[RMDB]
RNA sequence: GGGAACGACUCGAGUAGAGUCGAAAAAGAGUUUUUUCAUAUCCUCUAAAUCAGGAAUUUCAUUUUGUGCAUUUAUGUUGGACAGAAACAAUGUUAUUAAUGUGCUGUUCUUAAGCCUCUAAAUCAAGAAGGUACUUAUUUGACUUCUGAUUCCUAAGUAUUCCUCGUAUUUCGAUACGAGGAAUACAAAAGAAACAACAACAACAAC
Reactivity to 2A3 in 0.01 (KOAc 150mM, MgCl2 10mM, bicine 150mM(pH8.5), 24C), signal-to-noise 6, nucleotides 027 to 156: a000g040a010g000u090u040u010u010u080u050c110a130u170a070u230c030c020u030c020u030a040a060a030u030c010a020g040g030a040a060u050u160u120c040a050u070u120u150u130g070u050g040c010a030u000u080u070a090u160g080u060u050g030g000a020c020a040g060a060a110a010c030a060a090u070g080u200u110a150u180u170a150a050u050g000u020g020c010u010g010u040u030c000u030u100a070a030g010c030c000u020c020u080a100a160a160u140c090a050a050g080a060a040g130g000u050a050c010u080u130a100u130u050u050g030a020c010u010u020c010u030g010a040u030u030c000c000u040a170a030
Reactivity to DMS in 0.01 (KOAc 150mM, MgCl2 10mM, bicine 150mM(pH8.5), 24C), signal-to-noise 2, nucleotides 027 to 156: a070g020a110g030u000u000u010u010u000u000c060a130u010a180u010c060c020u000c030u000a070a090a130u010c070a100g040g010a080a050u010u000u010c060a130u010u000u000u010g070u020g020c070a070u000u000u010a030u040g030u010u010g000g020a160c080a140g020a190a060a070c070a060a050u010g010u000u010a070u000u000a080a110u000g030u000g040c020u000g000u010u010c030u000u000a040a100g040c050c020u000c030u000a060a030a080u000c070a070a090g000a030a040g000g020u000a060c100u000u000a130u000u010u000g010a020c030u000u000c000u000g000a160u000u000c020c020u000a060a300